Source: RMDB library OK3TST, as collected in RNAgym. Structure probing data (DMS and 2A3) for a 207-nucleotide construct. High DMS reactivity at an A or C suggests that its Watson-Crick edge is free. The reactions ran in a buffer of 150 mM KOAc, 10 mM MgCl2 and 150 mM bicine (pH 8.5), at 24 C. For DMS the reverse transcriptase was MarathonRT. For DMS, 2,037 sequencing reads were counted. For 2A3, 959 sequencing reads were counted.

[RMDB]
RNA sequence: GGGAACGACUCGAGUAGAGUCGAAAAACGAUAUCAAGCGGCGAAAUGAUUGGUAUAAAACCCAUGAGUAUGGAAAAACUGCUAAACAAAUUGUUGAACAUCCAUUGUUACCACCGGGUGUAGAGUAUGACAUGGUUGUAGAUGAUGAGCAUAUACACACGUAAGCAACUUUCGAGUUGCUUACGUGAAAAGAAACAACAACAACAAC
Reactivity to DMS in 0.01 (KOAc 150mM, MgCl2 10mM, bicine 150mM(pH8.5), 24C), signal-to-noise 2, nucleotides 027 to 156: a080c090g030a140u010a040u000c040a000a090g000c000g000g010c010g020a080a170a160u000g030a070u000u000g000g000u000a300u010a120a050a100a070c000c000c070a070u000g010a120g020u020a060u000g000g010a050a040a010a070a100c070u000g040c010u000a120a060a130c090a070a050a120u010u000g010u000u000g000a090a030c070a060u000c010c020a090u000u030g000u000u000a050c030c020a050c020c090g000g020g040u000g040u010a060g000a180g010u000a120u010g030a060c010a070u010g010g020u010u000g010u010a150g000a110u010g010a080u000g010a150g060c040a060u000a110u010a130c070a110
Reactivity to 2A3 in 0.01 (KOAc 150mM, MgCl2 10mM, bicine 150mM(pH8.5), 24C), signal-to-noise 2, nucleotides 027 to 156: a000c020g010a030u040a030u110c060a100a000g040c030g070g000c020g140a020a100a050u080g040a040u140u040g010g030u050a020u050a080a120a020a040c040c010c010a040u120g000a000g080u080a070u140g000g080a060a090a000a000a000c040u080g000c110u180a200a010a030c100a020a190a090u120u110g010u000u020g040a020a020c030a060u040c060c010a010u000u060g090u020u100a080c010c050a020c010c060g060g000g000u020g020u040a040g010a000g020u120a060u130g010a010c020a010u070g020g000u050u020g040u040a000g000a090u050g000a020u010g020a020g050c060a030u110a020u140a160c100a010